[RMDB]
RNA sequence: GGGAACGACUCGAGUAGAGUCGAAAAGAAUUGUCGGCCGGAGUCAACCGAAUGGCUACCAGCUUGAGCCGGUCCACCGCCUCGGCGAACUCCUCGAGCGUGGGUAUGCGCCGGUCGCGGAAGCUCAAGCGAUAAUGACGUUCGCGUCAUUAUCGCUAAAAGAAACAACAACAACAAC
Reactivity to 2A3 in 0.01 (KOAc 150mM, MgCl2 10mM, bicine 150mM(pH8.5), 24C), signal-to-noise 4, nucleotides 027 to 126: g020a000a100u230u090g070u110c020g020g010c020c020g040g000a040g020u040c030a050a090c150c080g100a090a110u040g000g000c000u040a230c040c000a010g040c000u030u050g010a000g020c040c010g040g040u040c040c020a030c020c040g000c000c000u070c020g040g000c010g000a100a050c010u020c030c010u060c110g060a080g030c190g090u190g000g000g000u000a050u300g060c010g000c000c000g010g000u030c050g000c000g000g030a060a000g030c030u060c090a040
Reactivity to DMS in 0.01 (KOAc 150mM, MgCl2 10mM, bicine 150mM(pH8.5), 24C), signal-to-noise 2, nucleotides 027 to 126: g000a130a060u040u030g000u010c020g000g000c110c010g000g020a090g020u010c140a100a100c130c050g030a110a120u000g000g020c000u030a060c020c110a130g030c000u000u020g010a010g000c100c170g000g010u020c070c080a300c090c010g000c050c000u000c090g070g010c060g030a030a120c070u020c160c010u020c030g010a040g000c100g000u130g000g040g000u000a020u100g020c080g000c010c010g000g010u000c090g000c000g000g030a130a050g020c040u020c040a080